[RMDB]
RNA sequence: GGGAACGACUCGAGUAGAGUCGAAAAAUGCUGAUCACGGCCCGUGCGGUGCAGGGCCUGGGCGCCUCGCUGCUAUUUCCGCAGACGUUGUCGAUCAUCAGCCGGAUAUUCGAGCCGCAGCGCCGUGGCCUAGCUAAAUAUUCGUAUUUAGCUAGGCAAAAGAAACAACAACAACAAC
Reactivity to DMS in 0.01 (KOAc 150mM, MgCl2 10mM, bicine 150mM(pH8.5), 24C), signal-to-noise 8, nucleotides 027 to 126: a050u040g010c060u010g000a070u040c030a030c030g000g000c000c020c030g010u010g010c010g000g030u010g020c110a160g000g000g010c050c020u000g000g000g010c030g000c010c000u000c020g030c010u000g000c020u020a120u020u030u030c160c140g010c030a030g000a100c030g010u010u000g010u040c030g010a220u010c020a090u010c120a050g000c000c030g010g010a130u030a110u020u020c140g000a220g000c010c000g010c030a060g010c300g020c010c000g000u010g000
Reactivity to 2A3 in 0.01 (KOAc 150mM, MgCl2 10mM, bicine 150mM(pH8.5), 24C), signal-to-noise 9, nucleotides 027 to 126: a000u220g020c060u090g020a090u100c000a020c030g000g010c000c030c040g170u040g000c020g000g030u050g040c050a140g020g000g050c040c010u030g000g020g010c020g000c000c000u010c010g010c000u020g000c010u080a200u140u200u080c070c050g000c020a010g040a090c030g020u030u030g130u270c040g030a150u070c040a040u010c010a020g020c010c010g080g020a070u050a120u190u180c070g030a040g010c010c000g000c010a010g000c000g000c000c000g010u010g040